RNA sequence: GGGAACGACUCGAGUAGAGUCGAAAAUAUGUCAUUUGUAGUGCUUAUUUAUCAGUUGUUCGGCGUACUGCAGGUGGCACAGCUUUCUCUAUGUACGCACAUAGAGGAAGAGAAGCAGGUCGAACAACUUUCUCUAUGUACGCACAUAGUGGAAGUGCGUGUCCAGUCUGUUCGCAGACUGGAUACGAAAAGAAACAACAACAACAAC
Reactivity to DMS in 0.01 (KOAc 150mM, MgCl2 10mM, bicine 150mM(pH8.5), 24C), signal-to-noise 3, nucleotides 027 to 156: u000a060u010g000u010c030a050u000u000u010g020u000a100g030u000g010c040u000u020a110u000u000u000a120u010c050a100g030u000u000g010u000u010c020g030g000c100g020u000a080c030u010g000c010a050g020g030u000g020g020c020a070c040a090g020c020u000u000u010c010u000c010u000a000u000g020u000a150c300g020c300a150c010a020u000a000g020a040g020g000a010a010g000a120g030a110a130g030c060a080g000g040u000c050g020a050a030c020a030a030c000u000u000u000c010u000c010u000a030u000g020u000a130c300g000c180a070c000a070u000a020g000u000g000g000a050a070g000u000g000
Reactivity to 2A3 in 0.01 (KOAc 150mM, MgCl2 10mM, bicine 150mM(pH8.5), 24C), signal-to-noise 8, nucleotides 027 to 156: u240a070u050g050u030c010a020u010u020u070g050u060a020g000u020g010c010u130u110a130u190u270u090a210u290c110a060g020u020u020g010u010u030c020g020g000c030g020u050a040c010u000g000c000a010g030g020u020g030g010c020a010c020a050g040c000u000u010u000c000u000c000u000a000u000g030u030a070c170g020c110a010c010a010u000a000g010a000g010g000a000a010g010a020g020a050a010g060c170a050g000g120u040c020g020a020a010c010a020a020c000u010u020u000c020u000c000u010a020u040g040u050a070c090g040c110a010c020a000u020a010g050u080g040g040a060a040g030u070g110

Chemical mapping of a 207-nucleotide RNA with DMS and 2A3. Values cover nucleotides 27 to 156. The data come from the RNA Mapping Database (RMDB), library OK3TST. 2A3 is a SHAPE reagent: it acylates the 2'-hydroxyl of flexible nucleotides of all four kinds. DMS adducts were read by reverse transcription with MarathonRT. Conditions: 150 mM KOAc, 10 mM MgCl2 and 150 mM bicine (pH 8.5), 24 C.